[RMDB]
RNA sequence: GGGAACGACUCGAGUAGAGUCGAAAAGCAGCAGUGAAUUAAAAUAAACAUGAAGUUCAAGAACAAGAUACAAACGGCAAGUAUCGUUCGAUCCAUGAGCCGAAUAAUAUCACAAAGAAGAAGAAAACACUUAGGUCCUAUUCGUAGGACCUAAGUGAAAAGAAACAACAACAACAAC
Reactivity to DMS in 0.01 (KOAc 150mM, MgCl2 10mM, bicine 150mM(pH8.5), 24C), signal-to-noise 2, nucleotides 027 to 126: g010c030a050g000c150a090g020u000g040a040a040u000u000a060a050a090a140u000a110a120a100c060a030u020g010a110a040g010u000u010c030a070a090g000a030a030c060a060a090g000a040u000a000c040a030a100a120c110g000g000c100a160a120g000u000a010u010c010g000u000u000c090g000a070u010c050c100a100u000g000a140g020c070c040g000a070a060u000a040a110u000a120u000c020a040c090a010a050a080g000a100a090g000a080a070g000a040a120a040a150
Reactivity to 2A3 in 0.01 (KOAc 150mM, MgCl2 10mM, bicine 150mM(pH8.5), 24C), signal-to-noise 1, nucleotides 027 to 126: g000c070a000g020c040a050g060u000g060a030a030u100u120a050a040a040a120u190a050a080a010c000a020u040g110a080a010g040u000u030c060a040a020g010a050a010c020a070a030g020a020u010a010c050a030a120a000c040g110g020c100a090a030g010u020a000u020c000g030u050u030c040g020a020u010c040c050a010u040g030a010g030c000c000g020a020a020u050a020a000u040a010u050c070a010c040a080a070a010g080a080a000g060a060a040g050a040a130a030a000

The data come from the RNA Mapping Database (RMDB), library M2PK90. This 177-nucleotide RNA was probed chemically with DMS and 2A3. For 2A3 the reverse transcriptase was SuperScript II with manganese. Values cover nucleotides 27 to 126. The RNA was probed in 150 mM KOAc, 10 mM MgCl2 and 150 mM bicine (pH 8.5) at 24 C.